[RMDB]
RNA sequence: GGGAACGACUCGAGUAGAGUCGAAAAAUUGCUUGAUGGUGACCAGUUACAUGCUAACUACGUCUUUUGGCGCAACAGCACCCUCAUGCAGUUGUCAUCAUACAGUUUGUACGAUUUACAGCGAUUCUCACUCCGUGCUAAAGGCACCCCAGUGAUGUGUAUCAACCUCUUUCGAGAGGUUGAUACAAAAAGAAACAACAACAACAAC
Reactivity to 2A3 in 0.01 (KOAc 150mM, MgCl2 10mM, bicine 150mM(pH8.5), 24C), signal-to-noise 3, nucleotides 027 to 156: a000u040u030g010c010u010u010g010a020u030g000g040u030g020a190c060c010a040g010u010u050a020c080a220u250g090c020u040a000a050c040u050a020c080g080u090c040u040u140u070u300g020g020c010g000c030a080a080c010a050g000c020a030c000c000c000u000c000a010u010g000c010a010g030u060u050g020u050c040a050u010c010a020u050a040c010a050g070u050u200u170g020u100a020c020g000a060u000u070u130a070c030a010g030c030g050a060u000u040c010u010c060a040c010u050c030c060g010u000g000c020u100a200a070a000g080g000c010a040c000c010c000c000a000g050u050g120a130u060g030
Reactivity to DMS in 0.01 (KOAc 150mM, MgCl2 10mM, bicine 150mM(pH8.5), 24C), signal-to-noise 2, nucleotides 027 to 156: a050u010u000g010c010u000u000g000a070u000g020g000u040g010a070c040c090a170g010u010u000a140c130a100u030g020c040u000a060a130c090u000a010c000g010u010c030u000u000u000u000g020g020c000g010c030a100a100c300a090g000c010a020c000c000c120u010c040a080u000g080c050a060g020u000u000g010u000c080a020u000c020a020u000a070c000a090g040u000u010u000g020u010a090c040g010a090u000u000u000a020c060a100g000c030g020a190u010u000c040u000c040a080c030u000c020c030g010u020g000c000u000a090a130a160g020g000c050a030c020c050c020c020a070g040u010g000a110u000g010